Annotation: Source: RMDB library TTRDEL, as collected in RNAgym. This 177-nucleotide RNA was probed chemically with DMS and 2A3. For DMS the reverse transcriptase was MarathonRT. Values cover nucleotides 27 to 126.
RNA sequence: GGGAACGACUCGAGUAGAGUCGAAAAGAUAUGGAGAUAUGCAGCUUUUGACGGGUAUCGGAAACGAUACACCGAUAAGCUGGUAUCUCCUAAGUCAAACGGGUACGACCUUCGGGUCGUACCCGAAGUAACACACAGUGUUCGCACUGUGUGUUACAAAAGAAACAACAACAACAAC
Reactivity to DMS in 0.01 (KOAc 150mM, MgCl2 10mM, bicine 150mM(pH8.5), 24C), signal-to-noise 3, nucleotides 027 to 126: g000a030u000a300u010g000g000a010g000a020u000a010u000g030c000a000g020c000u000u000u010u000g000a200c120g000g000g000u000a000u010c000g010g000a130a070a150c010g010a000u010a000c000a070c000c000g030a050u000a000a010g030c010u000g000g000u000a000u010c000u000c000c000u000a000a030g010u000c020a080a170a190c070g000g010g010u010a010c020g000a010c000c000u000u010c220g030g000g020u000c010g010u000a000c000c000c000g000a000a030
Reactivity to 2A3 in 0.01 (KOAc 150mM, MgCl2 10mM, bicine 150mM(pH8.5), 24C), signal-to-noise 3, nucleotides 027 to 126: g020a000u040a020u120g010g010a000g020a000u070a030u170g300c020a020g000c030u090u150u250u220g110a070c020g010g030g000u000a000u000c000g000g000a070a020a010c010g000a020u010a010c080a180c060c010g040a050u060a120a000g000c000u000g010g000u010a000u010c000u000c010c000u000a040a000g030u010c030a040a030a150c020g000g020g000u010a000c000g020a010c020c000u070u190c300g080g010g000u030c000g000u000a000c000c000c000g000a000a000